[RMDB]
Record summary
Structure probing data (DMS and 2A3) for a 170-nucleotide construct. DMS adducts were read by reverse transcription with MarathonRT. Reactivities are rounded to 0.1 and cut off at 0 and 3. The RNA was probed in 150 mM KOAc, 10 mM MgCl2 and 150 mM bicine (pH 8.5) at 24 C. For 2A3, 3,646 sequencing reads were counted. It was measured as part of the RMDB library 15KLIB. 2A3 adducts were read by reverse transcription with SuperScript II with manganese.
RNA sequence: GGGAACGACUCGAGUAGAGUCGAAAAUAUGUGAUAAUCUUACAAGCCACUAAAUUUACUUUGUGGAACUACUUGUUUGAGACUAUUCCCACACAGUUGUUCCCACUCUUAUUUGUGACUAUGGCCUAUAGUGGGCUGUUCGCAGCCCACAAAAGAAACAACAACAACAAC
Reactivity to DMS in 0.01 (KOAc 150mM, MgCl2 10mM, bicine 150mM(pH8.5), 24C), signal-to-noise 2, nucleotides 027 to 129: u040a120u080g010u000g010a110u000a090a170u000c020u000u000a030c020a000a100g010c020c020a010c020u100a030a060a040u000u000u080a220c200u030u020u020g030u000g080g000a050a010c040u030a280c010u030u000g000u070u000u000g010a010g000a050c120u020a130u000u000c090c030c130a200c160a140c120a050g000u000u020g000u060u060c010c050c050a210c100u050c120u010u010a100u000u080u000g040u020g020a070c100u010a080u040g040g000c000c060u020a030u000a080
Reactivity to 2A3 in 0.01 (KOAc 150mM, MgCl2 10mM, bicine 150mM(pH8.5), 24C), signal-to-noise 3, nucleotides 027 to 129: u100a020u000g090u000g120a110u020a240a030u070c000u000u000a000c000a000a040g000c000c000a030c030u080a020a010a060u230u300u090a060c060u000u010u010g000u010g000g000a000a030c060u120a070c000u110u000g000u010u020u000g030a010g000a030c020u030a060u000u020c000c000c000a000c000a000c000a020g000u000u010g000u000u000c000c030c000a050c000u030c020u070u000a160u120u130u040g090u040g000a000c020u040a200u090g010g040c000c000u030a050u010a110